RNA sequence: GGGAACGACUCGAGUAGAGUCGAAAAGAGCGUCGGCGCGCCCUGUUCAUGAUCGACGUGGACCAUUUUAAGCAGAUCAACGACGCGCUCGGACACCAUGUCGGCGACCGCUUUCUGCAAGAACUGGCACGUGUCAGCUAUUCGUAGCUGACACGUGAAAAGAAACAACAACAACAAC
Reactivity to 2A3 in 0.01 (KOAc 150mM, MgCl2 10mM, bicine 150mM(pH8.5), 24C), signal-to-noise 2, nucleotides 027 to 126: g060a040g000c010g000u030c050g030g030c050g010c000g010c020c000c000u070g080u090u220c170a150u200g050a100u030c040g040a020c040g020u030g050g020a040c000c020a080u030u040u000u120a020a030g010c040a000g000a050u050c040a030a090c030g110a030c110g000c000g000c160u070c080g080g000a010c020a040c050c100a110u220g030u050c040g020g020c000g020a060c000c040g030c030u050u040u000c020u040g030c030a050a010g010a040a000c030u000g040g030
Reactivity to DMS in 0.01 (KOAc 150mM, MgCl2 10mM, bicine 150mM(pH8.5), 24C), signal-to-noise 2, nucleotides 027 to 126: g000a180g010c010g030u010c030g020g000c010g050c190g010c050c010c020u020g010u010u020c120a170u000g000a050u010c060g010a060c030g030u010g010g020a190c020c040a020u000u000u000u000a060a300g000c030a050g010a060u010c110a070a050c040g000a070c150g010c070g000c050u000c110g000g000a080c030a120c200c300a070u010g030u000c020g000g000c040g010a050c120c030g000c050u010u000u020c030u000g010c030a040a180g010a050a040c050u000g010g000